The record gives the reactivity of an RNA of 207 nucleotides to 2A3 and DMS.
RNA sequence: GGGAACGACUCGAGUAGAGUCGAAAAAUGUGUCACAGACUGAUGUACACAAGAAGAAAUGUAGAAAGUUCUUCAGGCAAAAGAAAAAUGUUACCAGAUGGAAAUUUACUCCUACAAAUAGAAAUUAAGUGUAUCAAACAGGUGAAUAGCAAUGCUACGACUAGCAGUAUUUCGAUACUGCUAGUCGAAAAGAAACAACAACAACAAC
Reactivity to 2A3 in 0.01 (KOAc 150mM, MgCl2 10mM, bicine 150mM(pH8.5), 24C), signal-to-noise 1, nucleotides 027 to 156: a010u080g020u010g010u020c060a030c010a110g070a080c070u150g050a060u050g070u070a010c020a000c030a020a050g080a040a000g030a030a180a010u150g030u060a040g050a170a110a010g000u010u010c010u040u000c010a050g030g000c070a090a080a040a100g070a100a160a120a050a010u030g050u020u040a020c010c030a050g040a090u050g010g110a020a010a080u110u170u040a100c040u000c000c010u010a040c060a010a050a040u080a020g020a020a050a000u090u060a070a020g010u010g030u090a040u080c060a020a070a000c020a010g000g020u050g050a010a020u030a010g030c030a020a030u170g010c010u160a020
Reactivity to DMS in 0.01 (KOAc 150mM, MgCl2 10mM, bicine 150mM(pH8.5), 24C), signal-to-noise 1, nucleotides 027 to 156: a130u020g000u000g010u010c010a150c040a070g030a100c060u000g000a300u020g070u000a080c010a070c010a030a130g050a120a080g010a080a170a100u000g000u040a190g000a130a120a130g000u000u000c010u000u000c020a150g050g020c040a080a040a090a140g000a120a040a110a090a190u000g030u000u020a080c050c060a140g020a090u010g000g000a040a090a080u000u000u000a070c030u000c030c000u000a190c070a040a040a080u000a020g010a100a030a160u010u010a030a080g030u020g000u000a080u000c050a020a020a110c050a040g000g000u000g000a040a060u010a030g080c020a080a200u000g000c040u000a190
Annotation:
Values are in units of 0.01, from 0 to 300, in steps of 10. Conditions: 150 mM KOAc, 10 mM MgCl2 and 150 mM bicine (pH 8.5), 24 C. The data come from the RNA Mapping Database (RMDB), library OK3TST.